[RMDB]
RNA sequence: GGGAACGACUCGAGUAGAGUCGAAAAACCCUGGGACCCAGUAAUACCCGGGGGGAGGCGGGGUAAACCCAUACUAUGGGAACUGCUGGGUUCCUCGGAUGUCGAUCCCCUCUCCCGUUCGGGAAAAAAACGUACAGCUUCGGCUGUACGAAAAGAAACAACAACAACAAC
Reactivity to DMS in 0.01 (KOAc 150mM, MgCl2 10mM, bicine 150mM(pH8.5), 24C), signal-to-noise 3, nucleotides 027 to 129: a130c020c000c030u030g000g050g020a020c030c020c020a010g000u000a100a140u030a120c050c000c010g000g000g000g000g000g000a030g000g000c000g010g000g000g000u030a020a110a080c120c070c010a000u050a080c000u060a060u040g070g000g000a080a050c080u010g040c070u030g030g000g040u060u020c020c000u010c020g020g020a040u110g020u040c050g030a090u140c020c040c010c040u010c030u000c020c020c010g040u030u050c040g130g100g080a010a000a020a050a090a100a090
Reactivity to 2A3 in 0.01 (KOAc 150mM, MgCl2 10mM, bicine 150mM(pH8.5), 24C), signal-to-noise 4, nucleotides 027 to 129: a000c000c000c010u000g000g000g000a000c000c010c010a000g020u040a010a070u070a160c010c010c000g000g000g000g000g000g000a010g010g050c090g010g000g000g000u050a050a090a040c020c000c000a030u120a100c140u150a120u180g000g010g020a040a040c040u050g020c000u000g000g000g000u020u030c000c000u010c000g060g000a060u160g040u100c020g050a060u050c000c000c000c050u010c000u000c000c000c000g070u110u100c060g000g000g000a060a000a010a000a000a000a030